An RNA of 177 nucleotides, treated with 2A3 and DMS and read out base by base. The data come from the RNA Mapping Database (RMDB), library M2PK90. 2A3 adducts were read by reverse transcription with SuperScript II with manganese. For DMS, 1,706 sequencing reads were counted. Conditions: 150 mM KOAc, 10 mM MgCl2 and 150 mM bicine (pH 8.5), 24 C.
RNA sequence: GGGAACGACUCGAGUAGAGUCGAAAAACAAAGAGCGUACAUCUCUCUCAGACAGUACGACAGUCUGACUCUCUCGUACAACUCGCUGACGAGAGAGAGAGAGCGUUCAAAGCAGCGAGUAAAAAAAGUAUUAUAAGGGGUUCGCCCCUUAUAAUACAAAAGAAACAACAACAACAAC
Reactivity to 2A3 in 0.01 (KOAc 150mM, MgCl2 10mM, bicine 150mM(pH8.5), 24C), signal-to-noise 2, nucleotides 027 to 126: a000c090a020a120a020g030a010g010c010g010u050a080c100a300u030c000u020c000u000c010u000c010a010g020a020c010a030g120u230a090c100g100a040c150a030g000u000c020u020g010a040c010u000c000u000c000u000c080g020u050a060c050a150a050c110u010c010g010c020u020g010a010c000g000a010g000a000g000a000g000a000g000a000g000a010g000c020g000u030u010c060a110a070a010g060c040a000g020c010g010a000g060u150a050a140a000a000a040a010a000
Reactivity to DMS in 0.01 (KOAc 150mM, MgCl2 10mM, bicine 150mM(pH8.5), 24C), signal-to-noise 2, nucleotides 027 to 126: a070c020a080a120a110g020a030g010c020g000u010a150c120a160u020c020u010c020u020c120u010c030a220g000a030c030a040g020u000a050c200g030a120c180a120g020u000c030u000g000a300c060u000c030u000c000u010c030g000u000a040c070a100a030c000u000c000g010c000u010g000a030c000g000a010g000a020g000a000g000a040g020a000g010a060g000c030g030u000u000c010a090a140a060g000c080a010g020c020g000a020g020u010a010a010a070a110a050a070a080